[RMDB]
RNA sequence: GGGAACGACUCGAGUAGAGUCGAAAACUCUGACUUUGAGAUGGAGAUUAGUGUUCAGGGAGUGCUUUGGGGAGGAACAGCUAUGGAGUAGAAAGGAAGGAGACAGGACUGUGCAGAGGAAAAAGUUUAGCUGCACUGCAGUCUCCACAGAACCGUCCGUACGUCCAAGGUUCGCCUUGGACGUACGAAAAGAAACAACAACAACAAC
Reactivity to 2A3 in 0.01 (KOAc 150mM, MgCl2 10mM, bicine 150mM(pH8.5), 24C), signal-to-noise 1, nucleotides 027 to 156: c000u020c010u000g070a060c040u010u050u200g010a090g030a060u040g040g000a030g000a050u080u140a100g020u050g080u090u000c040a040g050g000g060a030g000u090g040c020u040u050u140g050g030g000g000a010g060g000a020a040c010a030g000c020u080a050u190g020g020a040g000u090a010g140a110a060a010g040g060a030a070g020g000a000g050a000c050a010g060g070a090c020u010g010u040g000c030a000g020a080g140g100a160a140a000a000a000g140u210u100u050a030g060c000u010g000c010a060c010u020g040c000a010g010u000c010u020c000c000a030c010a010g010a000a010c020c010g030u040c020
Record summary: An RNA of 207 nucleotides, treated with 2A3 and read out base by base. For 2A3, 581 sequencing reads were counted. Source: RMDB library OK3TST, as collected in RNAgym. 2A3 adducts were read by reverse transcription with SuperScript II with manganese.